[RMDB]
RNA sequence: GGGAACGACUCGAGUAGAGUCGAAAAAGGCGCUCCCGCGUUCGAACCUGCGGCCGGGCAUGGUUGCGGAAAAGCGAGGUUGCCUAGCUCCUCGUGCGCCAUGAUACCACACUGGUCUUUCUGACGCGUGUCCUGCUACUUAUCGAUUUCUGCGGGUGACACGCUAUGUCUUCGGACAUAGCGUGUCAAAAGAAACAACAACAACAAC
Reactivity to 2A3 in 0.01 (KOAc 150mM, MgCl2 10mM, bicine 150mM(pH8.5), 24C), signal-to-noise 1, nucleotides 027 to 156: a040g060g050c000g000c010u050c020c030c000g000c030g030u040u100c060g020a020a020c050c090u040g040c090g040g020c040c130g020g010g000c000a000u050g020g000u100u300g080c130g090g050a000a230a000a000g000c000g000a000g050g050u280u050g000c080c170u060a060g000c000u070c000c000u020c000g020u090g000c010g000c000c000a000u050g010a060u040a120c050c010a040c020a060c160u110g000g100u000c090u040u080u040c010u010g000a010c000g000c000g000u000g030u090c000c040u120g070c000u020a070c050u030u120a070u160c020g020a040u040u300u250c050u050g010c000g040g070g000u090